[RMDB]
RNA sequence: GGGAACGACUCGAGUAGAGUCGAAAACGCCAAGUGGGGGUUCGCUUUGGACAGGAGAAAACUGCGUUUAAAGCUUAGCGUGCUGCGCGCAGAAAAUAGAAUAGAAUGAAUAAUAAUCGUUAAAACAAGGUAUAUGACUAUUCGUAGUCAUAUACCUAAAAGAAACAACAACAACAAC
Reactivity to DMS in 0.01 (KOAc 150mM, MgCl2 10mM, bicine 150mM(pH8.5), 24C), signal-to-noise 8, nucleotides 027 to 126: c130g000c040c040a070a080g030u010g000g000g010g020g010u000u010c090g000c070u010u010u020g010g010a060c070a070g010g010a070g000a070a080a090a110c020u000g000c020g000u000u010u010a040a100a050g000c000u010u010a140g020c280g020u010g000c010u010g000c300g000c010g000c010a010g010a040a040a050a040u020a080g010a100a090u030a060g010a050a070u010g010a050a080u020a060a090u020a110a100u030c070g010u010u010a040a050a120a070c200a110
Reactivity to 2A3 in 0.01 (KOAc 150mM, MgCl2 10mM, bicine 150mM(pH8.5), 24C), signal-to-noise 7, nucleotides 027 to 126: c050g020c010c020a060a040g020u080g020g030g020g000g030u040u050c030g000c060u060u030u060g060g010a060c040a070g040g050a060g080a060a050a010a030c010u010g000c000g020u020u050u150a140a090a000g000c000u050u140a030g030c050g170u080g010c040u010g000c000g000c000g000c030a000g050a010a100a010a020u140a010g100a040a020u060a110g070a080a090u160g070a070a010u180a080a050u100a040a080u100c050g030u040u100a070a140a000a050c060a080